[RMDB]
The data come from the RNA Mapping Database (RMDB), library M2RFPK. Structure probing data (2A3) for a 207-nucleotide construct. For 2A3, 693 sequencing reads were counted.
RNA sequence: GGGAACGACUCGAGUAGAGUCGAAAAGAAAGAAAGAAAGAAACCGUCUCUGCUAGUCUCACGGUAACCACGUUGAAAUCGCAACGAAAGAAGCUCGCACUCAACUUCAACGGCUUAACUAGUGCAAAAAACUUACUGAUCUUCGGAUCAGUAAGAAGACUUCUGACUAGUUCGCUAGUCAGAAGUCAAAAGAAACAACAACAACAAC
Reactivity to 2A3 in 0.01 (KOAc 150mM, MgCl2 10mM, bicine 150mM(pH8.5), 24C), signal-to-noise 1, nucleotides 027 to 156: g050a060a020a010g060a020a170a000g050a030a140a010g090a080a030a000c040c050g100u030c030u020c030u050g020c040u080a060g030u070c010u030c070a010c010g000g000u030a010a070c020c010a020c060g000u000u000g050a090a130a180u150c120g010c090a040a030c030g110a080a040a120g060a040a020g030c070u110c080g060c030a060c010u010c020a050a090c020u020u000c020a130a060c000g010g000c000u050u050a060a030c020u000a020g010u020g010c040a000a000a000a150a000a000c000u000u000a000c020u000g000a000u000c000u000u010c070g040g010a000u010c000a010g000u000a000a000g000a000a000